[RMDB]
RNA sequence: GGGAACGACUCGAGUAGAGUCGAAAAUCCUAAGUCCAUCUCUAGCGUGAGGCUUGGAUUUACAGGCUGAGUAUAUCGGAAACGAUAUAUGUAAGCCUGUUGUCAGCCUUCGGGUGGAUAUGGAAAAUCAAGAUACCGCUUCGGCGGUAUCUUGAAAGAUCACGUAGAUGUUCGCAUCUACGUGAUCAAAAGAAACAACAACAACAAC
Reactivity to DMS in 0.01 (KOAc 150mM, MgCl2 10mM, bicine 150mM(pH8.5), 24C), signal-to-noise 2, nucleotides 027 to 156: u010c010c000u000a060a090g020u010c010c000a000u000c000u000c000u000a110g040c110g030u010g000a070g120g040c000u010u010g030g020a020u000u000u010a030c000a010g030g030c010u000g010a300g000u000a010u000a000u000c000g020g010a260a110a300c010g010a020u010a000u000a020u000g010u010a300a170g040c020c000u030g020u010u000g010u000c000a110g020c000c020u010u020c050g020g010g010u000g010g010a050u010a300u000g000g030a040a050a130a210u010c010a030a010g020a020u000a050c010c000g000c000u000u010c300g100g010c030g010g000u000a010u000c000u000u000g020a040a080a130
Reactivity to 2A3 in 0.01 (KOAc 150mM, MgCl2 10mM, bicine 150mM(pH8.5), 24C), signal-to-noise 4, nucleotides 027 to 156: u020c000c000u020a100a020g100u010c010c000a010u010c020u020c030u130a030g120c030g120u200g090a010g000g000c010u100u160g160g010a030u300u100u140a000c000a000g000g000c000u010g010a020g090u010a000u000a000u000c020g010g040a040a050a050c010g000a000u000a000u010a000u060g080u170a020a000g000c000c000u000g000u000u000g000u000c010a000g000c000c000u020u030c020g050g020g090u120g010g000a000u000a010u020g020g000a040a160a020a130u020c000a000a010g000a000u000a000c000c000g010c030u060u090c300g050g000c000g010g000u000a000u000c000u000u000g000a010a000a000

Source: RMDB library RNAMAK, as collected in RNAgym. The record gives the reactivity of an RNA of 207 nucleotides to DMS and 2A3. For DMS the reverse transcriptase was MarathonRT. 2A3 adducts were read by reverse transcription with SuperScript II with manganese. The RNA was probed in 150 mM KOAc, 10 mM MgCl2 and 150 mM bicine (pH 8.5) at 24 C.